[RMDB]
RNA sequence: GGGAACGACUCGAGUAGAGUCGAAAAUGACUGCCAUGUGGAUCCUAGGGAUCGUGUACUAGGUACCGUACGUACCAUGCGGAUCCAUGAGUACUGCGAUCUGGAUCAGCAGGUACGAUCUGAUCAGGUCUAAAGUAUCUUUCGAGAUACUUUAGACAAAAGAAACAACAACAACAAC
Reactivity to 2A3 in 0.01 (KOAc 150mM, MgCl2 10mM, bicine 150mM(pH8.5), 24C), signal-to-noise 9, nucleotides 027 to 126: u090g030a020c030u040g020c040c020a170u110g050u100g090g020a060u030c010c030u040a100g070g070g040a090u090c060g060u090g020u090a040c020u020a020g050g000u060a140c010c020g030u060a060c030g020u020a030c020c060a190u050g000c010g020g010a020u000c000c000a030u150g010a000g020u080a110c080u140g080c050g050a060u000c020u040g000g000a000u000c000a010g000c000a000g000g000u000a020c050g010a080u000c030u060g060a100u100c050a050g130
Reactivity to DMS in 0.01 (KOAc 150mM, MgCl2 10mM, bicine 150mM(pH8.5), 24C), signal-to-noise 9, nucleotides 027 to 126: u000g010a120c090u010g010c050c030a100u000g020u000g010g010a150u000c000c010u010a100g020g010g010a060u000c070g020u010g020u000a040c020u000a090g010g010u000a170c030c050g010u000a120c060g010u000a020c040c030a130u010g010c010g000g010a110u000c010c000a020u010g010a040g010u000a080c100u010g020c100g000a090u000c020u000g000g000a010u000c010a050g020c020a040g000g010u000a010c030g010a070u000c050u000g000a140u000c120a120g010